[RMDB]
RNA sequence: GGGAACGACUCGAGUAGAGUCGAAAAGAUAUGGAAUAGCCCAUGUCGACCGAUGUCGGAAACGACAUACGGUCUAACCAUGGCUAUUCCUAAGUCAAAGUCAACAACGCGUUCGCGCGUUGUUGACGCAUGGUAUAACCUUCGGGUUAUACCAUGCAAAAGAAACAACAACAACAAC
Reactivity to DMS in 0.01 (KOAc 150mM, MgCl2 10mM, bicine 150mM(pH8.5), 24C), signal-to-noise 7, nucleotides 027 to 126: g010a010u000a100u000g000g000a020a000u000a000g000c200c060c130a010u000g020u010c290g010a000c000c000g010a050u000g010u000c000g010g000a020a020a050c000g010a010c000a010u000a110c000g010g000u000c000u010a070a080c240c010a010u000g010g000c000u000a010u000u000c000c000u000a000a050g000u000c000a150a130a190g000u000c000a000a010c000a000a000c000g010c000g020u000u020c280g020c010g020c000g010u000u000g000u000u000g010a000c000
Reactivity to 2A3 in 0.01 (KOAc 150mM, MgCl2 10mM, bicine 150mM(pH8.5), 24C), signal-to-noise 6, nucleotides 027 to 126: g000a000u020a010u050g000g010a020a010u010a010g040c130c200c110a020u050g120u160c250g000a000c000c000g010a000u000g000u000c000g000g020a020a010a010c020g010a000c040a010u090a230c000g000g000u000c000u020a100a050c100c000a000u000g000g000c000u000a000u000u000c000c000u000a010a000g000u000c040a250a130a060g000u010c000a000a000c000a000a000c000g040c000g050u090u130c300g000c000g000c000g170u000u020g000u000u000g000a000c010